[RMDB]
RNA sequence: GGGAACGACUCGAGUAGAGUCGAAAAGCUCCCACGUGAGUGGGAGCAUACCAUGUGAAUGGUAGCGCUCUCGAAUUCAUGUACAGGGAGGUAAACCCCGAGAGCACUCUAUUCUGUUAGAUCGAGAGAUCGAAGAAUAGUGUGGAUGUACUGAAUCACUACUGAUGUUGUUCGCAACAUCAGUAGUAAAAGAAACAACAACAACAAC
Reactivity to DMS in 0.01 (KOAc 150mM, MgCl2 10mM, bicine 150mM(pH8.5), 24C), signal-to-noise 1, nucleotides 027 to 156: g000c000u000c000c000c020a100c040g040u000g050a080g050u000g050g010g030a030g060c000a000u000a000c010c000a020u010g030u010g000a300a030u000g010g030u000a020g000c130g050c030u000c000u000c040g000a120a020u000u010c020a000u000g030u000a070c030a090g000g010g050a080g050g000u000a050a120a200c050c020c010c010g000a150g010a150g000c000a020c000u010c010u000a020u000u000c000u000g000u010u000a150g010a020u000c000g030a300g010a300g010a020u000c020g000a100a000g000a020a000u000a010g010u010g000u000g020g000a080u010g000u010a110c050u020g000a140a060u010c080
Reactivity to 2A3 in 0.01 (KOAc 150mM, MgCl2 10mM, bicine 150mM(pH8.5), 24C), signal-to-noise 1, nucleotides 027 to 156: g040c000u000c000c000c000a000c000g010u000g030a000g000u020g000g010g000a000g020c000a000u000a000c000c000a020u040g080u030g190a180a010u020g000g010u020a020g060c020g010c040u010c000u000c010g080a030a020u020u010c010a000u010g030u040a070c100a090g010g000g010a010g000g040u070a030a050a070c020c010c000c000g050a040g010a010g130c000a000c000u010c000u020a020u000u000c000u000g060u040u130a010g000a000u000c020g000a000g010a010g000a060u000c000g000a020a000g000a000a000u000a000g020u040g000u000g020g040a110u050g000u010a050c030u040g010a020a010u070c010

This 207-nucleotide RNA was probed chemically with DMS and 2A3.
The RNA was probed in 150 mM KOAc, 10 mM MgCl2 and 150 mM bicine (pH 8.5) at 24 C.
2A3 adducts were read by reverse transcription with SuperScript II with manganese.